[RMDB]
RNA sequence: GGGAACGACUCGAGUAGAGUCGAAAAGCGUUCGACACCGCCGACAAGUCCAUGAACAAGGCGCAGUCGGCCGCGUUGAAGUACCUCCUGUUCACCCUGUUCAUGCUGCCGGUGGACGGGCGCAGCAUCGACGACGGCGACCGCGACCACCCGGUCGGCCUUCUGGACUAUUCGUAGUCCAGAAGGCAAAAGAAACAACAACAACAAC
Reactivity to 2A3 in 0.01 (KOAc 150mM, MgCl2 10mM, bicine 150mM(pH8.5), 24C), signal-to-noise 1, nucleotides 027 to 156: g000c000g000u040u020c030g050a090c020a020c060c000g030c010c010g010a050c040a160a080g040u010c110c000a100u120g090a030a010c080a010a050g010g000c000g000c010a000g020u000c000g090g090c020c010g030c000g040u000u060g060a150a080g050u070a080c020c030u000c000c010u010g090u000u030c010a040c000c010c000u020g010u110u190c060a110u300g020c010u000g100c130c090g000g050u000g020g000a000c000g000g000g000c000g050c030a100g050c010a070u000c000g060a090c030g000a030c000g000g030c000g020a020c000c040g020c000g110a170c000c010a010c020c030c010g070g010u030c000g030